[RMDB]
RNA sequence: GGGAACGACUCGAGUAGAGUCGAAAAUAAAGUAUACAUCGCUGGCGAAACUGAGACCGCGUCUUUUCACAAAAACGAGCAACAGCAGAAUGUUGCCCGUCAAGCCCACGAAAAUGGCUAUGCUGUAAAUGAUGAUUUCCAAAUAGCGUAGGGGCCCACGUAGAGAGAGGUUCGCCUCUCUCUACGUAAAAGAAACAACAACAACAAC
Reactivity to 2A3 in 0.01 (KOAc 150mM, MgCl2 10mM, bicine 150mM(pH8.5), 24C), signal-to-noise 1, nucleotides 027 to 156: u130a070a050a020g100u090a060u010a130c050a060u050c010g010c050u150g000g000c010g100a110a060a060c030u040g030a000g030a090c020c020g010c000g010u030c010u070u040u000u060c070a030c010a030a170a000a040a040c020g010a040g070c000a000a010c000a040g170c070a090g060a230a150u010g010u010u000g000c020c000c000g010u080c010a020a000g000c010c020c100a050c110g060a000a150a000a090u160g050g000c030u050a040u070g010c070u070g040u130a020a120a000u050g110a070u020g030a080u080u000u090c040c000a030a000a070u050a070g000c010g010u040a010g000g000g010g040c000c050c000
Reactivity to DMS in 0.01 (KOAc 150mM, MgCl2 10mM, bicine 150mM(pH8.5), 24C), signal-to-noise 1, nucleotides 027 to 156: u000a040a040a060g070u000a090u000a100c080a160u000c050g050c050u000g010g070c000g030a180a050a070c090u030g000a210g000a030c090c000g000c010g030u050c000u000u000u010u000c020a170c060a140a070a080a080a020c040g000a010g060c110a020a030c050a050g020c060a300g000a090a240u010g000u000u000g010c000c020c000g000u000c030a070a070g020c090c000c030a180c080g010a030a040a060a160u000g010g000c020u000a090u000g020c010u020g020u010a020a060a080u000g010a050u000g000a190u000u030u000c030c040a120a110a110u000a090g010c030g010u000a060g020g000g020g000c020c000c020